This 177-nucleotide RNA was probed chemically with DMS and 2A3. For 2A3 the reverse transcriptase was SuperScript II with manganese. For DMS the reverse transcriptase was MarathonRT. The RNA was probed in 150 mM KOAc, 10 mM MgCl2 and 150 mM bicine (pH 8.5) at 24 C.
[RMDB]
RNA sequence: GGGAACGACUCGAGUAGAGUCGAAAAGAUAUGGAGUAAGUGGAGACGGCACUACUAUUCGGAAACGAACGAAUAGUGUACGUCGAUGAAACUUACUCCUAAGUCAAAAGGAACGUUCGCGUUCCAACUCAUACUGAAAGUUCGCUUUCAGUAUGAGAAAAGAAACAACAACAACAAC
Reactivity to DMS in 0.01 (KOAc 150mM, MgCl2 10mM, bicine 150mM(pH8.5), 24C), signal-to-noise 7, nucleotides 027 to 126: g010a030u000a300u000g000g000a000g010u000a010a000g010u000g000g000a060g000a010c000g000g020c100a010c010u000a010c040u000a170u000u000c000g000g000a100a080a160c220g010a040a080c060g010a040a040u000a000g010u000g010u000a040c010g010u000c000g000a080u020g010a090a120a000c000u000u010a000c000u000c000c000u000a010a080g000u010c030a080a080a100a120g000g000a020a010c000g030u000u000c220g030c020g010u000u000c000c000a070a100
Reactivity to 2A3 in 0.01 (KOAc 150mM, MgCl2 10mM, bicine 150mM(pH8.5), 24C), signal-to-noise 8, nucleotides 027 to 126: g030a020u070a050u140g000g000a000g000u000a000a000g010u010g020g010a020g000a010c020g010g040c150a000c030u150a020c020u010a120u000u020c010g040g070a200a270a180c120g090a100a020c010g030a090a210u010a010g010u010g000u060a160c010g000u000c000g010a040u010g010a000a000a000c000u000u010a000c000u000c010c000u000a010a010g030u000c020a000a020a030a220g010g010a010a000c020g010u090u110c280g020c010g160u000u000c020c000a010a030